[RMDB]
RNA sequence: GGGAACGACUCGAGUAGAGUCGAAAAGAUAUGGAUCCCAUCCCAUAGCGCACGGUCGGAAACGACCGUGAACUACGCUAGUGGGAGUGGGAUCCUAAGUCAAAAGUGACUUCUUCGGAAGUCACAAGAUGUCAAUUCUGUUCGCAGAAUUGACAUCAAAAGAAACAACAACAACAAC
Reactivity to 2A3 in 0.01 (KOAc 150mM, MgCl2 10mM, bicine 150mM(pH8.5), 24C), signal-to-noise 2, nucleotides 027 to 126: g040a030u090a040u160g000g010a010u000c000c000c010a010u000c000c010c000a050u030a020g030c030g020c010a000c000g000g000u010c010g040g070a140a090a050c030g000a020c010c000g000u000g000a000a010c020u180a020c020g010c030u060a080g300u140g030g050g040a020g220u170g000g010g000a010u000c000c000u000a000a000g020u000c020a020a030a070a130g000u000g000a000c000u000u000c010u010u020c250g140g020a000a010g000u000c000a010c000a010a030
Reactivity to DMS in 0.01 (KOAc 150mM, MgCl2 10mM, bicine 150mM(pH8.5), 24C), signal-to-noise 3, nucleotides 027 to 126: g010a030u000a300u010g000g000a020u010c000c000c010a150u000c000c000c000a040u000a000g000c020g000c000a000c020g030g000u020c000g000g000a130a160a210c010g000a000c000c000g020u000g000a020a020c120u020a300c020g030c010u010a020g090u020g000g010g010a040g010u020g020g020g000a000u000c000c010u000a020a110g000u000c040a090a080a180a110g000u010g000a010c000u000u000c000u000u020c190g020g000a050a020g010u000c000a000c010a050a080